The data come from the RNA Mapping Database (RMDB), library OK2TST. Chemical mapping of a 177-nucleotide RNA with 2A3 and DMS. As a SHAPE reagent, 2A3 marks flexible, mostly unpaired nucleotides at the ribose 2'-OH. The reactions ran in a buffer of 150 mM KOAc, 10 mM MgCl2 and 150 mM bicine (pH 8.5), at 24 C. 2A3 adducts were read by reverse transcription with SuperScript II with manganese. DMS adducts were read by reverse transcription with MarathonRT. The 2A3 profile rests on 790 reads.

RNA sequence: GGGAACGACUCGAGUAGAGUCGAAAACUUCCUUUUUUAGGGGCAACUUUUUUAGGAAGUAUGCCACAAACGAUUGUUUUCGUGUUGCUUGGUGGUGGGGUCAGAAUUGGCCAUACAGGGCAAAUUGCAUAGACUGUGGUUUCGACCACAGUCUAUGAAAAGAAACAACAACAACAAC
Reactivity to 2A3 in 0.01 (KOAc 150mM, MgCl2 10mM, bicine 150mM(pH8.5), 24C), signal-to-noise 1, nucleotides 027 to 126: c000u040u050c000c020u010u090u000u010u130u240a080g040g000g000g030c000a030a080c030u000u050u020u020u160u230a050g010g100a000a000g010u070a140u100g000c010c000a090c040a010a100a000c060g130a130u150u080g060u080u140u030u160c020g000u060g060u060u000g000c010u020u030g120g050u060g030g000u000g020g170g030g000u010c010a000g030a140a200u120u040g070g000c020c000a030u050a090c010a000g010g020g000c000a010a060a080u080u180g010
Reactivity to DMS in 0.01 (KOAc 150mM, MgCl2 10mM, bicine 150mM(pH8.5), 24C), signal-to-noise 3, nucleotides 027 to 126: c220u010u000c000c000u000u020u020u020u010u030a090g010g000g000g000c090a040a080c010u000u000u000u010u000u030a110g010g000a010a000g000u000a080u000g020c010c010a060c080a090a120a060c150g010a070u000u000g010u010u000u010u000c050g010u010g000u010u000g020c060u000u000g010g030u000g000g010u000g010g000g020g000u020c030a060g010a090a130u020u000g010g020c010c020a070u010a040c100a120g000g010g010c060a020a040a100u020u010g010